[RMDB]
RNA sequence: GGGAACGACUCGAGUAGAGUCGAAAACCGAUGCGGCUGCGAAAAAAGCAGGCGUGCAUGUCGGCAUGCCGGCGGCAAAAGCGCAGGCGCUGUUUCGCGGUCUGAUGCUGGUCGAUGCGGAUCUCGCCCGUAUAUUAUGGUUCGCCAUAAUAUACGGAAAAGAAACAACAACAACAAC
Reactivity to 2A3 in 0.01 (KOAc 150mM, MgCl2 10mM, bicine 150mM(pH8.5), 24C), signal-to-noise 9, nucleotides 027 to 126: c010c000g010a080u180g020c010g040g020c000u010g000c010g070a080a030a010a010a040a030g010c030a020g020g020c000g010u020g000c020a030u160g090u240c050g100g030c020a010u070g030c020c010g030g020c040g040g000c040a050a050a060a050g040c010g000c000a020g050g030c010g000c030u020g030u020u060u040c030g000c010g010g020u030c050u080g060a070u100g050c040u050g020g080u060c060g050a080u130g050c020g020g050a090u020c040u040c050g050c010
Reactivity to DMS in 0.01 (KOAc 150mM, MgCl2 10mM, bicine 150mM(pH8.5), 24C), signal-to-noise 6, nucleotides 027 to 126: c010c000g020a080u030g010c030g010g010c000u000g000c000g010a010a010a040a100a120a110g000c010a050g000g000c010g040u010g010c020a090u030g020u050c220g000g010c010a050u010g000c010c010g000g020c030g000g000c220a070a070a140a110g020c000g000c000a020g000g000c010g010c010u020g000u000u000u010c030g020c040g010g000u010c030u020g030a120u010g010c040u000g000g000u020c060g000a070u010g000c040g010g000a110u010c050u000c030g010c300